Background
Conditions: 150 mM KOAc, 10 mM MgCl2 and 150 mM bicine (pH 8.5), 24 C. Structure probing data (DMS) for a 177-nucleotide construct. For DMS, 1,689 sequencing reads were counted. DMS adducts were read by reverse transcription with MarathonRT.
[RMDB]
RNA sequence: GGGAACGACUCGAGUAGAGUCGAAAACGUUCAAGCACCAGCUCGAAGAAGCGUAGCUAAUUUAUCUUAGAAAAUCAUGGAUUUGAAAAAGCUACGCUUCUCGAGAAGGUGCAUGAACAAGUUGAUGCAAAACCAAUGAGUUCGCUCAUUGGUUUUGAAAAGAAACAACAACAACAAC
Reactivity to DMS in 0.01 (KOAc 150mM, MgCl2 10mM, bicine 150mM(pH8.5), 24C), signal-to-noise 2, nucleotides 027 to 126: c190g010u000u000c000a000a070g010c000a020c000c010a050g020c010u000c000g000a030a060g020a010a010g010c030g010u010a010g010c000u030a040a280u000u000u010a020u010c010u000u000a160g000a160a060a110a090u020c130a140u010g000g010a030u010u040u020g000a030a040a060a230a020g000c010u010a000c000g000c000u000u000c000u000c000g000a020g000a010a010g010g030u000g010c010a020u000g010a020a000c000a080a080g000u010u000g020a130u000g000